[RMDB]
RNA sequence: GGGAACGACUCGAGUAGAGUCGAAAAAUUUUGUCAUGAUUUAAUAAAUCAAUUGGCUUGCUUAACCCUUAUUUAAAAAACAAAUCUUUUUUAAUUGGACACAAAUAAUAUCGGCACAACAUGUUGCAUUGACACUCAUAUUCGUAUGAGUGUCAAUAAAAGAAACAACAACAACAAC
Reactivity to 2A3 in 0.01 (KOAc 150mM, MgCl2 10mM, bicine 150mM(pH8.5), 24C), signal-to-noise 4, nucleotides 027 to 126: a010u100u080u030u050g000u010c010a010u000g070a030u030u050u120a170a080u140a120a040a010u010c050a050a120u090u040g000g010c000u010u040g010c000u100u160a130a150c000c000c000u030u040a160u040u160u110a070a070a000a000a000a000c040a030a160a090u090c070u020u140u040u060u020u070a030a130u080u060g060g020a030c020a000c040a130a080a030u260a060a080u100a090u100c030g030g010c030a010c010a070a180c020a120u140g010u040u030g060c000
Reactivity to DMS in 0.01 (KOAc 150mM, MgCl2 10mM, bicine 150mM(pH8.5), 24C), signal-to-noise 2, nucleotides 027 to 126: a090u000u010u030u000g010u000c010a080u010g000a010u000u000u000a140a100u050a110a060a020u010c000a060a100u030u010g030g000c000u010u020g000c100u000u010a070a100c010c000c010u000u020a020u010u000u000a010a020a030a030a040a040c070a070a130a090u030c010u000u000u000u000u010u010a010a020u000u010g000g000a060c060a050c140a030a020a030u020a040a050u020a050u010c040g010g000c000a020c040a050a060c130a050u010g010u010u000g030c080

Record summary: The record gives the reactivity of an RNA of 177 nucleotides to 2A3 and DMS. Values cover nucleotides 27 to 126. Values are in units of 0.01, from 0 to 300, in steps of 10. The reactions ran in a buffer of 150 mM KOAc, 10 mM MgCl2 and 150 mM bicine (pH 8.5), at 24 C.